RNA sequence: GGGAACGACUCGAGUAGAGUCGAAAAGAUAUGGAUACUGAUAGGGAGCUGUGGAUCGGAAACGAUCCAUACAGCUUUGAUCUAUUCAGUAUCCUAAGUCAAACGCCUAUAGUUCGCUAUAGGCGAACACACCGUAAUAGUUCGCUAUUACGGUGUGAAAAGAAACAACAACAACAAC
Reactivity to 2A3 in 0.01 (KOAc 150mM, MgCl2 10mM, bicine 150mM(pH8.5), 24C), signal-to-noise 4, nucleotides 027 to 126: g040a010u070a020u180g000g000a000u000a000c010u010g020a010u020a010g050g050g040a050g030c000u010g010u020g010g000a010u010c000g000g020a030a040a020c000g010a000u000c010c010a000u100a020c010a000g000c000u080u070u040g000a010u000c000u000a040u130u300c010a000g020u000a000u000c000c010u010a020a000g010u000c040a110a060a200c040g000c000c000u000a000u020a010g040u060u080c300g000c180u000a000u000a030g000g000c000g000a010a000
Reactivity to DMS in 0.01 (KOAc 150mM, MgCl2 10mM, bicine 150mM(pH8.5), 24C), signal-to-noise 5, nucleotides 027 to 126: g010a030u000a300u000g000g000a010u000a000c000u000g010a030u010a030g010g000g000a020g030c010u000g020u000g010g010a000u000c010g010g010a140a080a210c000g010a000u000c000c000a050u000a050c070a020g020c000u010u000u010g000a070u000c010u000a010u000u010c000a010g010u000a010u000c000c000u000a010a070g010u010c030a120a160a260c030g020c000c000u000a020u000a020g010u010u010c300g020c000u000a020u010a010g010g010c000g010a020a070
Structure probing data (2A3 and DMS) for a 177-nucleotide construct. For 2A3, 14,325 sequencing reads were counted.